[RMDB]
An RNA of 177 nucleotides, treated with 2A3 and DMS and read out base by base. 2A3 adducts were read by reverse transcription with SuperScript II with manganese. It was measured as part of the RMDB library OK2TST. The DMS profile rests on 730 reads. For 2A3, 783 sequencing reads were counted.
RNA sequence: GGGAACGACUCGAGUAGAGUCGAAAACAGUUCUGGAAGAUGCUAAUUCUCAUCAAAGAGGACUACUUUCCCAGGUAUCAGGCUUGUUGAGCAGACAGCAGGGGAUUAAGUAACUCAUAACCAGGCCCUUCCUGCCGUAAUUCGUUACGGCAGGAAGAAAAGAAACAACAACAACAAC
Reactivity to 2A3 in 0.01 (KOAc 150mM, MgCl2 10mM, bicine 150mM(pH8.5), 24C), signal-to-noise 1, nucleotides 027 to 126: c050a050g000u070u020c010u020g000g100a070a030g040a020u000g010c050u120a190a260u300u080c120u020c010a000u000c020a050a040a040g100a020g040g000a010c010u010a030c000u050u040u000c010c010c010a010g150g010u040a050u100c090a040g120g000c030u070u070g030u130u140g100a050g050c080a020g000a010c010a020g010c020a050g000g040g020g030a040u120u080a080a020g000u000a080a050c000u010c060a050u080a140a040c040c000a000g000g100c020c000
Reactivity to DMS in 0.01 (KOAc 150mM, MgCl2 10mM, bicine 150mM(pH8.5), 24C), signal-to-noise 1, nucleotides 027 to 126: c090a030g030u010u000c000u010g020g010a300a120g010a020u030g020c230u000a050a060u000u020c090u000c000a010u000c050a130a050a300g060a000g010g000a060c060u000a030c040u010u000u000c000c000c010a080g020g020u010a070u030c030a050g000g020c020u000u000g050u050u000g060a070g000c090a080g030a040c070a080g040c060a040g000g000g020g000a110u000u010a080a100g010u010a050a050c060u000c020a060u010a090a070c120c030a040g010g000c060c090